[RMDB]
RNA sequence: GGGAACGACUCGAGUAGAGUCGAAAAGAUAUGGAUCUAGUAGUGUGCAAGGCGAGUUUUUGCGUAAGAUCGGAAACGAUCUUACGCAAAAAUAACGCUGAUGACCACACACCAAGAUCCUAAGUCAGUUAUCAAUCGGGUUCGCCCGAUUGAUAACAAAAGAAACAACAACAACAAC
Reactivity to DMS in 0.01 (KOAc 150mM, MgCl2 10mM, bicine 150mM(pH8.5), 24C), signal-to-noise 2, nucleotides 027 to 126: g010a080u000a300u000g000g010a000u010c000u000a150g000u020a230g010u000g000u010g000c070a090a180g000g070c000g050a300g010u000u000u000u000u000g010c000g000u020a010a020g010a000u000c000g050g010a100a080a260c010g020a000u010c010u030u000a000c010g000c010a000a000a010a000a010u000a090a150c010g040c000u000g030a060u010g020a100c300c020a020c000a020c000a010c010c070a000a030g000a040u000c000c000u000a070a100g000u000c070a130
Notes: The record gives the reactivity of an RNA of 177 nucleotides to DMS. Source: RMDB library TTRINS, as collected in RNAgym. The RNA was probed in 150 mM KOAc, 10 mM MgCl2 and 150 mM bicine (pH 8.5) at 24 C.